[RMDB]
RNA sequence: GGGAACGACUCGAGUAGAGUCGAAAAAUCGGAACCUUCCAGGGAUCUCAGGAUUUUUUGGCUGUUUUCAUCCAGGUUGUGAUAAACAUCUGUGUGAGCUUCAAUUUCACCUUGGAGGUCCUACAGGCCUCAGGUAGCGUUUCGACGCUACCUGAGGAAAAGAAACAACAACAACAAC
Reactivity to 2A3 in 0.01 (KOAc 150mM, MgCl2 10mM, bicine 150mM(pH8.5), 24C), signal-to-noise 2, nucleotides 027 to 126: a030u120c080g020g050a110a180c030c010u150u050c040c010a000g070g000g000a100u060c110u030c090a100g050g060a130u080u060u020u070u030u060g080g000c050u020g160u080u190u050u160c010a020u010c010c010a000g020g060u130u100g080u080g040a110u220a200a060a020c030a030u020c010u010g000u000g000u000g030a000g000c010u000u020c000a030a050u000u000u160c100a070c050c000u020u030g010g010a010g000g040u000c000c000u040a060c080a040g020g190